This 207-nucleotide RNA was probed chemically with DMS and 2A3. It was measured as part of the RMDB library PDB130. The RNA was probed in 150 mM KOAc, 10 mM MgCl2 and 150 mM bicine (pH 8.5) at 24 C. Values cover nucleotides 27 to 156.
RNA sequence: GGGAACGACUCGAGUAGAGUCGAAAAAACAGGCCUGUUCUUAGCAAUACAUUACACAUCAGACACAACAACAGCUUUCUCAUCAGUUACACACAUUUGUCGAGACGUAAAUUACGGAUGAGUUAUUCGCUAUCUACAUGCAAACGGAGCAUCCAUACAGUUGGGACUAGUUCGCUAGUCCCAACUGAAAAGAAACAACAACAACAAC
Reactivity to DMS in 0.01 (KOAc 150mM, MgCl2 10mM, bicine 150mM(pH8.5), 24C), signal-to-noise 2, nucleotides 027 to 156: a120a030c050a050g020g030c040c020u010g000u010u010c020u000u000a080g030c040a080a070u010a050c080a120u010u000a110c100a050c030a020u010c020a060g010a070c000a110c100a110a070c080a100a060c080a100g030c060u000u000u000c040u000c020a120u030c050a030g010u010u000a020c070a090c100a160c060a090u010u000u020g050u000c090g010a190g020a070c040g000u000a060a020a080u000u000a060c050g010g000a050u000g010a140g010u000u010a050u000u030c080g100c010u000a160u000c010u000a030c040a040u010g020c000a030a010a070c030g000g000a090g000c100a110u010c000c020a030u000a210
Reactivity to 2A3 in 0.01 (KOAc 150mM, MgCl2 10mM, bicine 150mM(pH8.5), 24C), signal-to-noise 4, nucleotides 027 to 156: a000a010c080a030g020g020c010c000u030g020u130u030c020u040u090a030g030c020a010a060u040a170c070a060u100u150a040c060a010c010a080u080c020a010g050a070c050a010c020a160a040c030a060a000c020a020g010c030u030u050u010c010u010c010a050u020c010a020g030u090u130a020c060a000c020a010c020a110u060u150u120g070u090c070g060a040g030a090c030g040u080a060a040a120u110u080a040c050g000g040a020u010g010a000g020u050u040a050u070u090c030g000c030u040a050u070c010u070a050c020a050u080g030c000a080a040a010c050g040g020a050g040c030a020u010c010c000a010u010a080